[RMDB]
RNA sequence: GGGAACGACUCGAGUAGAGUCGAAAACAGUGCGCCGCGCGGUUGCCGCCACCCGCAACGGCCGCAUUGGGGUCAUCGGCACCCGGGCCACCAUAGCCUCGCACGCGUACCAAGAUGCGUUUGCUGACGUGCAUCAGUGAUUCGUCACUGAUGCACGAAAAGAAACAACAACAACAAC
Reactivity to DMS in 0.01 (KOAc 150mM, MgCl2 10mM, bicine 150mM(pH8.5), 24C), signal-to-noise 1, nucleotides 027 to 126: c160a070g010u000g000c090g020c000c040g010c120g020c050g050g030u000u020g010c010c000g000c110c240a120c080c010c000g000c020a060a100c040g000g030c080c090g050c040a100u010u010g000g010g000g010u010c130a050u000c050g000g010c050a080c040c010c020g000g000g010c010c030a050c040c080a120u000a100g000c000c020u000c070g000c030a010c010g010c030g030u000a070c030c020a040a060g010a240u030g010c070g020u000u010u000g030c020u000g010a150
Reactivity to 2A3 in 0.01 (KOAc 150mM, MgCl2 10mM, bicine 150mM(pH8.5), 24C), signal-to-noise 1, nucleotides 027 to 126: c020a030g040u010g010c080g000c020c010g300c050g040c070g120g010u120u120g000c020c010g020c040c010a040c000c000c010g150c050a030a080c010g060g010c050c070g000c020a030u010u050g020g000g030g010u030c020a070u060c060g040g010c020a040c010c000c000g000g020g010c020c010a010c020c010a020u060a040g060c000c000u070c010g000c010a010c030g000c040g030u050a050c000c050a030a020g080a080u080g040c020g010u010u060u070g030c050u100g020a040
Overview
Chemical mapping of a 177-nucleotide RNA with DMS and 2A3. For 2A3, 1,450 sequencing reads were counted. The reactions ran in a buffer of 150 mM KOAc, 10 mM MgCl2 and 150 mM bicine (pH 8.5), at 24 C. It was measured as part of the RMDB library OK2TST. 2A3 is a SHAPE reagent: it acylates the 2'-hydroxyl of flexible nucleotides of all four kinds. DMS adducts were read by reverse transcription with MarathonRT.